[RMDB]
RNA sequence: GGGAACGACUCGAGUAGAGUCGAAAAGGGGAGUGUGAUCCUGGUACCGCCGUAGAAACUGGAUUACGACGUCUACCCGGGAUUCAAACUCGGCCCCUCUCAGAGGUGACUCUGAGCGAAAGGUCUGUGCAAAGCACACUGACGAGUUCCUGAAAUGCACGUCAUGUAAGUUCGCUUACAUGACGUGAAAAGAAACAACAACAACAAC
Reactivity to 2A3 in 0.01 (KOAc 150mM, MgCl2 10mM, bicine 150mM(pH8.5), 24C), signal-to-noise 3, nucleotides 027 to 156: g010g000g000g000a010g020u050g020u070g040a000u000c000c000u000g000g000u030a040c040c010g000c000c000g020u020a010g110a120a230a070c260u210g070g020a150u170u030a010c020g000a000c000g010u040c040u050a060c050c050c010g000g000g020a040u070u090c050a070a100a060c040u010c000g220g000c000c000c010c000u000c000u000c000a010g000a020g020g030u150g030a050c000u000c000u010g000a010g000c020g080a080a030a000g110g000u030c090u060g000u000g010c090a290a140a100g030c010a010c000a010c110u080g010a010c020g000a000g050u000u020c000c000u030g050a090a080a000u150g010
Reactivity to DMS in 0.01 (KOAc 150mM, MgCl2 10mM, bicine 150mM(pH8.5), 24C), signal-to-noise 1, nucleotides 027 to 156: g010g050g070g010a270g080u000g020u000g000a070u000c010c000u020g000g010u010a040c080c000g000c010c020g030u000a070g020a150a130a290c230u000g010g020a300u000u000a050c020g000a010c020g010u000c030u000a070c050c010c060g060g020g020a030u000u020c100a110a080a060c000u000c020g020g020c050c010c030c000u010c020u000c010a040g020a040g020g010u020g000a300c000u000c000u000g000a010g010c050g000a060a070a110g020g000u000c020u000g040u000g020c040a060a130a160g010c040a070c020a030c040u000g020a190c020g050a190g020u000u010c010c010u000g010a110a130a230u000g000